[RMDB]
RNA sequence: GGGAACGACUCGAGUAGAGUCGAAAAAGAGGUUACGGACUCGGGGGCAGUACCCGACGCCUCCACCAAAACUUUCUAAAUAACUUGCUCCUAAAGGUAAUUUGUACGUCGAUCCGGUACUCAAUAAAUGUGAUGACAACUUCGGUUGUCAUCACGUAAAAGAAACAACAACAACAAC
Reactivity to 2A3 in 0.01 (KOAc 150mM, MgCl2 10mM, bicine 150mM(pH8.5), 24C), signal-to-noise 2, nucleotides 027 to 126: a000g020a010g050g000u070u040a000c030g010g000a010c020u010c060g010g020g000g020g000c000a020g020u020a070c000c000c000g000a010c050g000c000c000u000c000c020a010c010c000a000a060a000a030c020u080u140u030c020u060a080a070a010u080a030a040c020u020u050g000c000u000c010c010u020a080a040a000g010g010u000a020a070u060u080u050g000u000a010c010g020u000c040g030a050u020c000c000g020g010u000a000c020u020c040a000a050u030a000a000
Reactivity to DMS in 0.01 (KOAc 150mM, MgCl2 10mM, bicine 150mM(pH8.5), 24C), signal-to-noise 3, nucleotides 027 to 126: a060g000a030g010g000u010u020a100c290g000g010a100c120u020c120g000g000g000g000g020c030a100g000u010a050c030c030c010g000a110c170g000c020c000u010c010c020a200c040c020a070a200a040a030c090u000u020u000c060u040a030a060a070u020a080a070c120u000u010g000c010u000c000c000u000a050a080a050g000g010u020a060a050u000u000u000g010u020a030c040g000u010c050g000a060u000c010c030g000g000u010a070c040u000c060a060a050u020a000a000

The data come from the RNA Mapping Database (RMDB), library OK1LIB. The record gives the reactivity of an RNA of 177 nucleotides to 2A3 and DMS. The 2A3 profile rests on 2,622 reads. The RNA was probed in 150 mM KOAc, 10 mM MgCl2 and 150 mM bicine (pH 8.5) at 24 C.